[RMDB]
RNA sequence: GGGAACGACUCGAGUAGAGUCGAAAAAGAGGAUACGUCCUCAACUCGAGCGCGAUCGCCCGGCCCGCCGGCCUCUUGCCGGCUAGUGGUGCGGGGGAGACGACUCGUAGUUCAAUCCUGAGGGAAAAAUUGGACACUGUUUCGACAGUGUCCAAUUAAAAGAAACAACAACAACAAC
Reactivity to 2A3 in 0.01 (KOAc 150mM, MgCl2 10mM, bicine 150mM(pH8.5), 24C), signal-to-noise 4, nucleotides 027 to 126: a000g000a000g030g000a000u000a110c220g150u020c000c000u010c020a000a020c010u010c010g010a010g000c120g000c060g060a080u010c030g240c030c000c000g000g000c010c000c000g000c000c000g000g010c000c060u240c100u120u300g000c000c000g000g000c000u030a060g030u110g170g000u220g290c040g010g000g010g010g020a080g020a040c000g090a120c000u000c000g030u090a000g010u010u170c070a010a040u030c000c000u040g040a100g030g050g060a000a090a000
Reactivity to DMS in 0.01 (KOAc 150mM, MgCl2 10mM, bicine 150mM(pH8.5), 24C), signal-to-noise 3, nucleotides 027 to 126: a040g010a020g010g010a020u010a030c210g010u000c000c000u000c000a060a010c000u000c010g000a000g020c060g040c100g010a290u000c000g000c000c000c000g000g000c010c000c000g010c000c000g010g010c010c300u030c230u040u030g030c000c000g020g000c000u010a020g010u060g000g010u010g050c000g010g000g000g010g000a000g000a140c000g030a300c000u000c000g000u030a020g000u000u000c160a120a120u000c020c010u010g010a110g000g000g000a060a060a040